[RMDB]
RNA sequence: GGGAACGACUCGAGUAGAGUCGAAAAGGACAAUGCGCGGUGCAGCCCCUCCGCCAGUUGGGUCACUUCCGGUGCGGUGAAUUCGCUGUCCGCCAUAAACCGGCAGUCUAACCUGACAUGCGUGUGACACCACGCUUUGGUUCGCCAAAGCGUGGUGAAAAGAAACAACAACAACAAC
Reactivity to DMS in 0.01 (KOAc 150mM, MgCl2 10mM, bicine 150mM(pH8.5), 24C), signal-to-noise 1, nucleotides 027 to 126: g000g000a070c030a040a050u000g000c040g000c050g030g040u080g070c000a060g010c030c140c030c050u000c110c030g010c000c040a080g000u020u000g030g000g000u030c260a120c060u030u000c030c050g040g000u030g000c130g050g000u000g010a030a020u000u020c270g000c050u030g000u000c040c040g000c000c010a010u020a000a150a190c000c000g000g000c050a020g020u000c050u110a050a070c160c000u100g010a050c020a130u010g000c140g060u020g000u000g000a160
Reactivity to 2A3 in 0.01 (KOAc 150mM, MgCl2 10mM, bicine 150mM(pH8.5), 24C), signal-to-noise 3, nucleotides 027 to 126: g050g000a030c040a060a040u030g020c090g000c040g090g020u130g000c000a030g020c000c000c000c000u030c010c000g050c030c000a010g000u100u160g040g000g020u100c050a040c090u060u020c000c000g000g060u080g050c030g000g030u060g050a050a190u210u210c030g000c080u080g060u020c000c000g000c000c000a030u080a080a070a000c020c000g000g010c020a010g000u070c050u080a080a110c010c030u010g010a040c010a120u090g010c060g040u210g000u040g050a020
The record gives the reactivity of an RNA of 177 nucleotides to DMS and 2A3. Conditions: 150 mM KOAc, 10 mM MgCl2 and 150 mM bicine (pH 8.5), 24 C. For 2A3, 1,450 sequencing reads were counted. It was measured as part of the RMDB library OK1LIB.